[RMDB]
RNA sequence: GGGAACGACUCGAGUAGAGUCGAAAAAUGGUGACCUUCGGGUCACCAUGGUGCGUAGCUGCGUUAAUUUAAUAGCUAGGCUUAAUAAAUUUAAUUAACGCAAUGGAGCCUGCUUCGGCAGGCUCAACGAUGUUCCUCAAUUCGUUGAGGAACAUCGAAAAGAAACAACAACAACAAC
Reactivity to 2A3 in 0.01 (KOAc 150mM, MgCl2 10mM, bicine 150mM(pH8.5), 24C), signal-to-noise 2, nucleotides 027 to 126: a000u010g000g000u000g000a020c010c020u010u060c290g090g000g000u000c000a000c000c000a000u000g000g020u120g050c120g110u160a050g050c080u010g000c000g000u010u000a010a010u020u010u090a060a060u060a010g010c060u060a060g280g000c000u100u140a170a050u090a110a270a070u050u090u040a010a020u010u000a000a000c000g000c000a030a070u090g060g010a000g040c000c010u010g040c010u030u030c110g020g000c000a000g000g040c000u000c000a000a000
Reactivity to DMS in 0.01 (KOAc 150mM, MgCl2 10mM, bicine 150mM(pH8.5), 24C), signal-to-noise 2, nucleotides 027 to 126: a010u000g010g020u010g000a010c000c000u010u010c190g010g040g020u000c000a000c000c000a000u000g000g050u040g000c090g020u000a070g010c120u010g010c010g010u000u000a010a010u000u000u010a060a090u000a040g010c010u000a070g020g000c020u010u010a060a110u000a120a050a140u000u000u000a010a020u000u000a010a000c010g010c030a080a100u000g010g010a010g000c000c000u010g010c000u000u000c240g020g010c000a000g010g000c010u000c000a000a050